RNA sequence: GGGAACGACUCGAGUAGAGUCGAAAACAUACUUAGGCUGUUUAAUGAAUAAUUUAUUGAUUUUGCUCAUGGACAGAACUCAAUAUUAGGCAUUGUGAAGUGCAUAUGGCUGUGAACCAGGACCUUACAAAGUAAAGAAACAUAUAAACAUCCAUUAGAUGCUUUCUAUGUUCGCAUAGAAAGCAUCAAAAGAAACAACAACAACAAC
Reactivity to 2A3 in 0.01 (KOAc 150mM, MgCl2 10mM, bicine 150mM(pH8.5), 24C), signal-to-noise 4, nucleotides 027 to 156: c010a020u120a030c030u110u070a050g050g010c010u010g030u060u080u050a090a050u050g030a040a090u100a120a050u120u070u140a100u090u080g050a070u020u050u050u050g020c010u010c070a070u040g030g010a010c020a030g020a040a030c040u030c030a040a040u030a120u110u110a080g050g000c010a010u020u040g040u020g090a090a090g020u010g020c010a010u030a060u120g040g010c020u030g010u030g070a030a010c020c010a010g020g030a020c000c000u000u020a020c040a070a080a000g030u090a080a110a030g110a040a060a000c030a010u180a000u060a160a070a000c010a050u100c010c010a030u030u090a010
Reactivity to DMS in 0.01 (KOAc 150mM, MgCl2 10mM, bicine 150mM(pH8.5), 24C), signal-to-noise 2, nucleotides 027 to 156: c070a110u010a010c080u000u000a120g020g050c020u000g050u000u010u000a050a080u020g010a120a090u010a130a130u000u000u010a060u000u010g000a050u000u000u010u000g040c030u000c090a120u020g030g000a090c030a020g010a060a150c080u000c020a020a020u000a090u010u020a070g080g000c020a030u010u010g020u000g020a110a090g000u010g000c050a090u000a110u010g000g010c020u000g000u000g000a030a070c030c020a140g040g000a060c030c050u020u000a140c060a040a040a180g030u000a030a050a090g020a110a060a100c060a060u000a090u000a050a030a100c050a080u000c010c040a090u000u020a120